Background:
Structure probing data (DMS) for a 177-nucleotide construct. The DMS profile rests on 1,036 reads. The reactions ran in a buffer of 150 mM KOAc, 10 mM MgCl2 and 150 mM bicine (pH 8.5), at 24 C. It was measured as part of the RMDB library RFMREP.
RNA sequence: GGGAACGACUCGAGUAGAGUCGAAAAGGAGGAAAGCCCAAACUCUUCUUCGCCUCUAGAACUAGGGGCUGAGAUUUGGUUUCCUUGUUUUCCUGAUGCCUCCCAUGCCUAUUGUUCUCAGAUGCUCGAUGAUGCCUAACUUCGGUUAGGCAUCAUCAAAAGAAACAACAACAACAAC
Reactivity to DMS in 0.01 (KOAc 150mM, MgCl2 10mM, bicine 150mM(pH8.5), 24C), signal-to-noise 1, nucleotides 027 to 126: g020g000a050g000g000a010a030a120g020c180c000c010a030a050a050c090u000c030u000u000c070u010u010c300g000c010c000u000c000u000a020g010a180a100c170u000a010g000g020g030g020c030u000g000a010g010a080u000u000u010g000g010u000u000u000c010c010u010u000g000u000u000u000u000c010c000u010g000a060u000g000c060c010u000c030c010c020a060u010g010c050c010u000a070u000u000g000u000u000c020u000c030a100g000a110u000g020c110u020c130